[RMDB]
RNA sequence: GGGAACGACUCGAGUAGAGUCGAAAAAAUGAUGCGGGUAAUUCGUAAUCUGUCUUCGUGGGUCAGUAGGUUGAGAUAGUUGUGCGCCAGCUCGUUACUGAGGAUGUUCGUGCCGUCAUUAAUACGCUGUACGCUUCGGUUUCGACCGAAGCGUACAAAAAGAAACAACAACAACAAC
Reactivity to DMS in 0.01 (KOAc 150mM, MgCl2 10mM, bicine 150mM(pH8.5), 24C), signal-to-noise 1, nucleotides 027 to 126: a120a050u000g050a070u000g030c100g000g030g000u020a020a050u000u000c010g000u000a070a160u030c000u000g020u020c120u000u000c090g020u000g010g000g010u000c020a130g000u000a030g000g000u030u010g030a000g000a080u010a010g000u010u000g030u030g000c090g000c050c020a100g000c030u000c100g060u020u000a100c120u110g000a030g050g000a130u010g000u030u020c000g060u010g070c020c000g000u000c130a050u040u060a060a100u130a060c120g020c160